[RMDB]
RNA sequence: GGGAACGACUCGAGUAGAGUCGAAAACAAGUCUGCGGUUCGCGACGUUCUUCACCGCUGAGGACUAGACUUCGUUCGACAGCUUGGUGUUCGACGUCACGGUAGAGACGUGGCGCCCACCGCGUCGGUGCCUGUGUAACUUCGGUUACACAGGCACAAAAGAAACAACAACAACAAC
Reactivity to 2A3 in 0.01 (KOAc 150mM, MgCl2 10mM, bicine 150mM(pH8.5), 24C), signal-to-noise 3, nucleotides 027 to 126: c030a060a020g130u000c030u070g010c010g180g050u160u190c040g000c010g040a010c000g020u060u030c020u020u020c000a010c000c010g000c010u000g000a020g060g010a020c020u030a060g060a270c060u110u040c140g040u000u010c010g180a220c070a020g030c000u160u260g000g000u020g020u020u040c050g010a000c000g000u000c040a000c020g080g040u050a040g010a010g010a100c000g000u020g010g020c010g000c010c020c000a000c010c020g010c000g000u030c060g020
Reactivity to DMS in 0.01 (KOAc 150mM, MgCl2 10mM, bicine 150mM(pH8.5), 24C), signal-to-noise 2, nucleotides 027 to 126: c150a090a060g000u000c030u010g000c010g010g000u000u000c030g010c040g000a020c010g010u010u010c070u010u010c040a020c020c010g010c020u000g000a300g000g000a010c010u010a140g000a080c160u010u010c210g000u010u000c030g000a150c030a020g010c020u000u000g060g010u000g000u000u000c200g010a020c020g000u010c000a020c000g000g000u000a090g010a130g000a030c010g020u000g000g000c000g000c020c010c000a240c020c010g000c020g000u010c010g040